An RNA of 207 nucleotides, treated with 2A3 and read out base by base. Conditions: 150 mM KOAc, 10 mM MgCl2 and 150 mM bicine (pH 8.5), 24 C.
RNA sequence: GGGAACGACUCGAGUAGAGUCGAAAAUUGCAUAACUGCCUUCCCAGAAUCAUUUUGCCGCCAUAGUUGCAGUAGCAACAAAUGGGCAUAAAUAAAAGAUGAUCCAUUUUGGCUUGGGAAAAAAUGGAGCGUGUCAGCUCAGUGGCAUUUUCCAUGGAUGCUAUCCGUGUUUCGACACGGAUAGCAUAAAAGAAACAACAACAACAAC
Reactivity to 2A3 in 0.01 (KOAc 150mM, MgCl2 10mM, bicine 150mM(pH8.5), 24C), signal-to-noise 1, nucleotides 027 to 156: u080u140g030c000a000u020a140a170c050u190g000c000c000u000u020c000c000c000a010g100a050a040u170c140a090u000u040u000u190g100c080c070g010c030c020a090u090a050g000u020u020g000c010a040g220u220a160g120c000a000a010c000a030a050a000u000g010g030g000c000a010u120a030a050a020u210a050a140a000a060g020a000u010g010a030u000c020c010a050u060u050u060u070g000g000c000u070u150g000g000g050a000a040a000a000a000a000u060g010g000a000g000c030g000u050g030u000c000a100g030c090u080c290a100g000u050g020g020c000a000u000u020u060u010c030c000a030u030g230g000